The data come from the RNA Mapping Database (RMDB), library RFM100. Chemical mapping of a 177-nucleotide RNA with 2A3. For 2A3, 516 sequencing reads were counted.
RNA sequence: GGGAACGACUCGAGUAGAGUCGAAAAGAAAGAAAGAAAGAACAGGGUUGAAAUGGCCAUUACCUCACAGUCACGUGGUCAUGAUGGUACAACGUGUGAUGUGACGUAGUGGAAGUCUCGACCUGAAUCAAACCGGGGACUUCGGUCCCCGGUUUGAAAAAGAAACAACAACAACAAC
Reactivity to 2A3 in 0.01 (KOAc 150mM, MgCl2 10mM, bicine 150mM(pH8.5), 24C), signal-to-noise 1, nucleotides 027 to 126: g170a000a030a000g140a000a060a000g130a050a190a000g050a000a000c060a070g000g010g000u000u030g000a000a010a010u150g020g020c000c000a000u000u000a000c080c070u040c000a000c000a030g090u020c000a000c020g000u000g020g010u110c040a140u270g200a040u130g080g120u280a080c010a040a000c060g030u010g000u020g100a230u000g070u000g000a020c000g000u000a000g000u000g040g000a000a000g060u070c000u000c000g000a000c000c020u010g000a000a080